[RMDB]
RNA sequence: GGGAACGACUCGAGUAGAGUCGAAAAUAGCGAAGUAGGAUUUUAUGCGUCAAGUGUUCACAGGCUGGGGAGUCGCCGUGAAACGAAAACCAGAAAGCGUGCUGCUUACGAUAUAAUUUCCGCACCCAUAAGAAGUCUCUGUUCGCAGAGACUUCAACCUUCCUCGUACCUUCGGGUACGAGGAAGGAAAAGAAACAACAACAACAAC
Reactivity to 2A3 in 0.01 (KOAc 150mM, MgCl2 10mM, bicine 150mM(pH8.5), 24C), signal-to-noise 1, nucleotides 027 to 156: u180a060g030c000g060a060a000g040u110a180g000g060a000u040u010u020u020a050u110g020c000g000u050c150a030a030g000u000g020u160u160c010a010c090a060g100g000c040u080g000g050g000g000a100g140u060c020g040c070c080g110u060g040a080a070a000c000g020a000a000a040a000c000c000a020g020a030a160a000g060c040g050u020g060c110u090g000c000u010u010a020c030g010a010u000a000u000a040a050u010u040u030c000c040g000c040a040c000c000c000a010u060a110a020g000a010a000g010u000c000u000c000u000g030u050u040c220g000c030a000g000a000g000a000c000u000u000c000a000a000
Structure probing data (2A3) for a 207-nucleotide construct. For 2A3, 603 sequencing reads were counted. For 2A3 the reverse transcriptase was SuperScript II with manganese. Source: RMDB library M2RFPK, as collected in RNAgym. The RNA was probed in 150 mM KOAc, 10 mM MgCl2 and 150 mM bicine (pH 8.5) at 24 C. Reactivities are given for positions 27 through 156.